Structure probing data (2A3 and DMS) for a 207-nucleotide construct. The data come from the RNA Mapping Database (RMDB), library OK3TST.
RNA sequence: GGGAACGACUCGAGUAGAGUCGAAAAUCUGCUCUUUUGAGCAGAUCCUAUGUGUGCAUAGGAAACUCCAAUUAACAUUGCAAAGGAGCUAUACACCUUUUAUCUGGUGUAUAGAAAACAUCGUGGGCCAAUUUAUGUUUGCGUAUGAGGCAAUGAAGGGGGUGGGCGAGUUCGCUCGCUCGCUCUCAAAAGAAACAACAACAACAAC
Reactivity to 2A3 in 0.01 (KOAc 150mM, MgCl2 10mM, bicine 150mM(pH8.5), 24C), signal-to-noise 4, nucleotides 027 to 156: u000c000u000g010c000u000c000u010u210u110u300g000a000g000c000a000g000a000u000c000c000u000a020u010g120u000g070u060g140c010a000u010a000g020g000a010a010a020c010u010c010c000a000a000u070u040a030a010c010a010u000u030g000c010a010a030a050g020g000a020g000c000u000a000u000a000c000a000c000c000u040u050u060u110a180u100c090u060g000g000u000g000u000a000u000a000g000a000a030a000a010c010a020u010c000g000u010g000g020g000c020c030a050a020u020u110u060a140u160g020u000u000u020g000c000g000u060a010u020g010a020g030g000c000a000a010u010g020a070a070
Reactivity to DMS in 0.01 (KOAc 150mM, MgCl2 10mM, bicine 150mM(pH8.5), 24C), signal-to-noise 5, nucleotides 027 to 156: u000c000u000g010c000u000c000u010u000u010u000g020a010g030c000a020g010a020u000c000c010u000a020u000g020u010g030u000g050c030a070u000a020g030g010a090a100a130c040u010c020c020a110a180u000u010a110a180c040a070u000u000g020c020a100a110a170g010g010a130g020c000u000a010u000a010c000a010c000c000u000u010u000u010a130u000c260u000g030g020u010g010u000a000u000a010g000a050a060a060a130c030a070u000c030g020u000g000g020g010c020c090a050a140u000u000u010a070u020g010u000u000u000g000c020g020u030a080u000g010a160g000g000c020a020a030u000g010a120a150
Source information:
Values are in units of 0.01, from 0 to 300, in steps of 10.